[RMDB]
RNA sequence: GGGAACGACUCGAGUAGAGUCGAAAAUUUAAUCCCAACAAAGGGCCAAGAGGGACGGCAACUUGGCCCAAGCCCAAAGAGCGAGACUCUAAAGGGAUGAGUCGUUCCCAACUCGCUCUCAAUAUAACAUAUACAUAUAAUUCGUUAUAUGUAUAUGAAAAGAAACAACAACAACAAC
Reactivity to 2A3 in 0.01 (KOAc 150mM, MgCl2 10mM, bicine 150mM(pH8.5), 24C), signal-to-noise 2, nucleotides 027 to 126: u000u020u040a080a030u030c010c000c000a020a000c010a000a050a000g000g010g030c000c000a020a000g010a040g050g080g090a060c040g040g060c020a050a020c030u020u020g000g000c000c000c000a000a000g000c020c000c000a090a110a020g020a000g010c050g030a040g030a130c040u030c030u170a060a080a100g100g040g020a060u190g010a010g000u000c000g010u000u000c000c000c000a000a000c000u000c010g000c000u020c000u030c040a100a060u130a040u060a240a020
Reactivity to DMS in 0.01 (KOAc 150mM, MgCl2 10mM, bicine 150mM(pH8.5), 24C), signal-to-noise 3, nucleotides 027 to 126: u010u020u020a130a100u000c000c000c000a120a120c180a050a140a100g000g000g000c000c010a010a000g000a170g010g010g000a050c050g000g000c040a130a120c020u000u010g000g010c000c000c010a010a040g020c040c020c040a070a210a020g000a020g030c020g010a050g010a290c110u010c080u000a010a100a100g000g000g010a110u000g000a010g010u000c000g010u000u000c010c000c000a020a030c060u000c020g000c020u000c010u000c110a050a080u000a070u010a100a180
The record gives the reactivity of an RNA of 177 nucleotides to 2A3 and DMS.
The 2A3 profile rests on 3,849 reads.
The reactions ran in a buffer of 150 mM KOAc, 10 mM MgCl2 and 150 mM bicine (pH 8.5), at 24 C.
Source: RMDB library M2PK90, as collected in RNAgym.
DMS adducts were read by reverse transcription with MarathonRT.